[RMDB]
RNA sequence: GGGAACGACUCGAGUAGAGUCGAAAAUCAGAUGAGACUAGGCAUCAGACUAGAUAGUAUCACACUACUGGUACAUAGUAGAGACAUACAUAGAUGGGUAUGACACAUCAGAGGCGCGGGCCACCGAAAUGCCGUAGGUAUUCGUACCUACGGCAUUAAAAGAAACAACAACAACAAC
Reactivity to 2A3 in 0.01 (KOAc 150mM, MgCl2 10mM, bicine 150mM(pH8.5), 24C), signal-to-noise 3, nucleotides 027 to 126: u050c000a030g020a070u040g060a000g070a090c050u040a050g030g040c010a040u020c040a080g050a080c030u040a040g040a130u080a070g070u050a050u080c050a020c020a000c090u100a020c030u020g040g040u150a070c030a090u130a040g030u010a000g000a000g010a070c000a040u060a030c040a040u090a040g140a130u060g080g010g010u070a080u150g020a020c000a010c000a090u030c010a000g000a050g070g050c060g030c060g040g010g000c030c010a020c020c000g020a040
Reactivity to DMS in 0.01 (KOAc 150mM, MgCl2 10mM, bicine 150mM(pH8.5), 24C), signal-to-noise 5, nucleotides 027 to 126: u000c070a090g010a090u000g000a110g010a120c060u010a060g010g020c030a040u000c080a090g010a070c060u000a070g010a120u000a050g000u000a170u010c090a100c170a110c060u010a020c030u000g010g010u010a070c110a070u010a030g010u000a040g010a130g010a110c100a040u000a040c050a050u000a080g010a130u010g000g010g000u000a050u010g010a100c090a060c070a040u000c040a070g010a110g010g010c090g020c070g010g000g000c020c040a050c050c030g000a070
Structure probing data (2A3 and DMS) for a 177-nucleotide construct. Source: RMDB library OK2TRN, as collected in RNAgym. For 2A3 the reverse transcriptase was SuperScript II with manganese. Reactivities are given for positions 27 through 126. Conditions: 150 mM KOAc, 10 mM MgCl2 and 150 mM bicine (pH 8.5), 24 C.